[RMDB]
RNA sequence: GGGAACGACUCGAGUAGAGUCGAAAACGGACUACGACAUCUUAUAUCUUAACCCAGUGUGCUCAGUGGAAAUUCUAUUAUGAUUUCACGCACAAAUCCGCGUAAAGCUGAGUUAUGUACGAGUAUAGCAGGAUAUCCGGUUCGCCGGAUAUCCUGCAAAAGAAACAACAACAACAAC
Reactivity to 2A3 in 0.01 (KOAc 150mM, MgCl2 10mM, bicine 150mM(pH8.5), 24C), signal-to-noise 2, nucleotides 027 to 126: c000g010g010a000c000u110a000c010g080a010c000a050u040c060u130u220a140u010a000u010c060u090u060a040a010c000c000c070a090g030u070g100u170g000c000u000c020a030g000u040g000g020a000a000a000u150u020c040u030a300u300u060a130u300g000a000u000u000u010c000a000c000g000c030a010c040a020a180a020u060c050c080g000c040g000u070a160a050a000g000c000u000g020a000g000u140u040a180u040g040u040a000c120g000a000g020u100a070u150a140